Source information
Chemical mapping of a 177-nucleotide RNA with 2A3 and DMS. The data come from the RNA Mapping Database (RMDB), library OK2TST.
RNA sequence: GGGAACGACUCGAGUAGAGUCGAAAAUCGCAAGGCGGUGCCGGUAUUAUCGGUGCAAAUAUCGCAGUCAUCAAUAAUGGCACGAUAACGGGUGGUAUUGGUGGCACUGGAGGCUUGAACGCCGGGAGAGUGAUUAUGACUUCGGUCAUAAUCACUCAAAAGAAACAACAACAACAAC
Reactivity to 2A3 in 0.01 (KOAc 150mM, MgCl2 10mM, bicine 150mM(pH8.5), 24C), signal-to-noise 2, nucleotides 027 to 126: u060c040g000c060a020a070g130g000c030g020g000u010g020c000c020g030g000u030a110u120u030a040u120c030g000g000u010g050c020a030a030a040u130a020u030c050g000c070a060g030u000c010a020u010c030a020a120u120a220a060u100g070g000c020a000c040g020a020u030a090a080c070g050g000g000u040g000g000u030a030u060u070g100g000u070g010g060c000a000c020u020g000g020a040g010g050c020u060u100g050a070a020c070g020c080c070g000g090g010a110
Reactivity to DMS in 0.01 (KOAc 150mM, MgCl2 10mM, bicine 150mM(pH8.5), 24C), signal-to-noise 2, nucleotides 027 to 126: u010c030g030c080a150a120g000g020c000g050g020u000g010c010c020g000g000u000a050u000u000a030u000c020g000g000u000g010c070a080a080a130u010a020u010c040g000c070a110g010u010c020a040u000c050a130a110u000a110a060u010g000g000c020a120c040g000a040u000a020a050c130g030g000g040u010g000g010u010a050u000u000g020g020u000g010g000c030a090c050u010g020g030a260g010g000c020u000u000g000a140a110c080g000c010c010g010g000g000a130
Record summary
Conditions: 150 mM KOAc, 10 mM MgCl2 and 150 mM bicine (pH 8.5), 24 C.